[RMDB]
RNA sequence: GGGAACGACUCGAGUAGAGUCGAAAAUCAACCUUGCAAAAGUUUGCACUUAUGCCAUCUUUGCUUACUCACCACAGCUUACACUUGUGUUUCCGGAAGUGAAGAUGAUACUUUUAUUAUACACAUGCAAAUGAUAGCAGUUCGCUGCUAUCAUUUGAAAAGAAACAACAACAACAAC
Reactivity to DMS in 0.01 (KOAc 150mM, MgCl2 10mM, bicine 150mM(pH8.5), 24C), signal-to-noise 4, nucleotides 027 to 126: u010c170a110a120c040c020u000u000g030c080a030a040a090a030g020u010u010u000g010c050a120c290u010u040a060u000g010c030c020a020u000c010u000u000u000g000c000u000u000a010c030u000c060a070c300c010a010c000a020g000c050u010u050a140c280a080c120u000u010g010u000g000u000u000u010c050c080g000g000a020a030g020u000g000a010a010g010a010u000g010a150u000a020c040u000u000u000u000a100u010u000a080u030a110c130a040c200a080u010g010
Reactivity to 2A3 in 0.01 (KOAc 150mM, MgCl2 10mM, bicine 150mM(pH8.5), 24C), signal-to-noise 3, nucleotides 027 to 126: u070c020a000a100c020c000u020u110g050c030a010a030a060a090g020u090u150u130g020c030a040c070u200u070a070u240g000c000c000a000u000c010u020u010u010g000c000u010u040a150c020u010c040a020c040c000a010c000a020g030c010u170u200a040c060a010c050u040u080g000u000g000u020u070u030c060c020g000g010a010a020g000u000g010a010a000g010a000u000g010a010u020a010c000u020u110u040u020a110u130u060a120u060a060c060a000c010a070u110g040